This 177-nucleotide RNA was probed chemically with DMS.

RNA sequence: GGGAACGACUCGAGUAGAGUCGAAAAGAUAUGGACAUGUCGCUCGAAUACGAAGAGCAACAGCUACAGGUCGGAAACGACCUAAGUAGACAUGCUUGUAUGUAUUCGAGCGACAUGUCCUAAGUCACAUACAAAACCGGUUCGCCGGUUUUGUAUGAAAAGAAACAACAACAACAAC
Reactivity to DMS in 0.01 (KOAc 150mM, MgCl2 10mM, bicine 150mM(pH8.5), 24C), signal-to-noise 2, nucleotides 027 to 126: g020a000u000a300u000g010g000a010c010a020u020g020u000c000g020c000u010c000g010a000a000u000a000c000g000a160a300g010a000g020c020a050a060c220a230g030c000u000a000c010a100g030g000u000c000g010g000a090a120a190c000g020a030c000c000u020a000a060g020u010a000g000a030c090a300u020g000c000u000u000g000u000a180u030g000u000a010u000u000c000g010a000g000c000g010a000c000a000u000g000u000c000c000u000a000a040g010u010c020a300

Reactivities are given for positions 27 through 126. For DMS, 1,503 sequencing reads were counted.